[RMDB]
RNA sequence: GGGAACGACUCGAGUAGAGUCGAAAAGAUAUGGACCCAUCCCACGAGGAGCUCGGAAACGAGAACUACUCCUGUGGGAGUGGGUCCUAAGUCAAAAGAUGGUAAUAGGUUCGCCUAUUACCAUCAACUCAUGGUAACAGUUCGCUGUUACCAUGAGAAAAGAAACAACAACAACAAC
Reactivity to 2A3 in 0.01 (KOAc 150mM, MgCl2 10mM, bicine 150mM(pH8.5), 24C), signal-to-noise 2, nucleotides 027 to 126: g020a000u080a050u190g000g000a010c000c000c000a000u000c000c010c000a000c010g160a030g000g020a010g000c020u010c030g030g060a080a100a030c020g020a010g010a040a010c090u280a080c000u080c000c000u050g020u010g000g000g010a000g010u060g010g000g000u010c000c000u000a010a000g020u000c000a010a020a030a170g010a010u000g000g000u000a000a010u020a020g030g090u070u170c300g130c040c000u010a010u000u000a010c000c010a000u000c000a000a000
Reactivity to DMS in 0.01 (KOAc 150mM, MgCl2 10mM, bicine 150mM(pH8.5), 24C), signal-to-noise 4, nucleotides 027 to 126: g010a050u000a300u000g010g010a010c000c000c000a070u000c000c000c000a010c000g020a020g020g010a010g000c010u000c010g020g000a100a120a190c000g010a010g000a080a020c050u010a300c010u000c000c060u000g030u000g000g010g000a010g020u000g000g000g000u000c000c000u000a000a090g000u010c030a070a090a090a140g010a010u000g000g000u000a010a000u000a000g000g010u000u030c200g040c010c000u000a000u000u000a000c000c000a000u000c010a030a100
Chemical mapping of a 177-nucleotide RNA with 2A3 and DMS.
For DMS the reverse transcriptase was MarathonRT.
The DMS profile rests on 3,980 reads.
It was measured as part of the RMDB library TTRDEL.